[RMDB]
An RNA of 177 nucleotides, treated with DMS and 2A3 and read out base by base. For 2A3 the reverse transcriptase was SuperScript II with manganese. Conditions: 150 mM KOAc, 10 mM MgCl2 and 150 mM bicine (pH 8.5), 24 C. For 2A3, 8,043 sequencing reads were counted. DMS (dimethyl sulfate) methylates the pairing face of unpaired adenines and cytosines. It was measured as part of the RMDB library OK1LIB.

RNA sequence: GGGAACGACUCGAGUAGAGUCGAAAAGAAAAUAAGAGCGUAAUCGCGUCUUGACGUGAGUGAGCCCACACGAAGAGCUAUCCCAAGUGGGAUAGCAUAGCUAACAAUACGCUAAGAUUCGUGUGAAAGCUAUUUAAUCGUUCGCGAUUAAAUAGCUAAAAGAAACAACAACAACAAC
Reactivity to DMS in 0.01 (KOAc 150mM, MgCl2 10mM, bicine 150mM(pH8.5), 24C), signal-to-noise 5, nucleotides 027 to 126: g000a080a060a090a080u040a050a060g010a120g010c000g000u010a190a110u020c000g010c000g000u000c040u020u030g000a030c070g010u000g000a030g010u010g020a160g000c030c040c010a020c000a000c000g010a020a030g010a160g000c000u010a000u010c000c000c010a300a200g070u060g010g000g000a000u000a010g010c000a040u000a010g000c010u000a150a110c300a130a160u030a060c270g010c000u000a040a150g000a170u010u000c000g010u000g010u010g000a070a120
Reactivity to 2A3 in 0.01 (KOAc 150mM, MgCl2 10mM, bicine 150mM(pH8.5), 24C), signal-to-noise 8, nucleotides 027 to 126: g040a000a050a010a040u200a030a030g040a030g020c030g040u080a070a060u030c000g000c010g060u020c080u090u170g100a040c000g010u010g010a030g040u070g050a020g020c000c010c000a010c000a000c000g000a010a000g020a000g000c000u000a000u020c000c000c010a200a120g200u300g130g000g000a000u000a000g000c000a010u000a000g000c000u040a060a070c070a130a130u150a130c130g000c000u010a030a020g060a190u000u000c000g000u000g000u000g040a090a030